[RMDB]
RNA sequence: GGGAACGACUCGAGUAGAGUCGAAAAUUGCCGAUCGGUAUGGAUGCCACCGUGACGGCUCAAUCACACAAGUGCCAACGAUAACGAGGCGCUCGCUAUUGCUGCGAAACUGACGGCCUGACGGUCUAAAACAGAUUCGUGUUCGCACGAAUCUGAACUACGUGUAUCACUUCGGUGAUACACGUAGAAAAGAAACAACAACAACAAC
Reactivity to 2A3 in 0.01 (KOAc 150mM, MgCl2 10mM, bicine 150mM(pH8.5), 24C), signal-to-noise 6, nucleotides 027 to 156: u110u110g030c010c010g050a090u070c030g000g030u140a100u140g070g070a090u130g060c030c020a040c000c020g050u040g080a100c050g010g000c020u050c040a050a060u080c000a040c020a020c010a160a060g020u020g030c010c010a120a050c100g090a130u130a220a060c070g010a070g010g000c020g000c030u020c020g010c010u080a060u230u290g040c050u060g030c030g030a080a050a030c060u070g040a040c030g010g000c000c000u040g030a030c060g020g010u020c040u090a050a060a040a050c010a000g000a000u010u000c010g000u010g050u050u050c200g010c070a000c010g000a000a000u000c000u010g000a020a010
Reactivity to DMS in 0.01 (KOAc 150mM, MgCl2 10mM, bicine 150mM(pH8.5), 24C), signal-to-noise 2, nucleotides 027 to 156: u020u000g000c010c000g000a100u000c010g020g060u000a100u000g030g010a200u000g010c050c080a140c030c040g030u060g000a240c180g000g060c040u020c060a100a140u000c050a140c050a080c060a120a080g060u000g030c030c010a090a140c040g020a140u000a070a140c070g000a180g030g060c070g030c010u010c040g050c020u000a060u010u010g000c000u000g000c000g020a080a160a100c060u000g000a080c060g050g000c000c000u000g020a120c210g020g040u020c050u000a040a040a130a200c030a000g020a010u010u000c000g020u000g010u000u000c270g000c030a010c010g010a030a040u000c000u000g020a020a120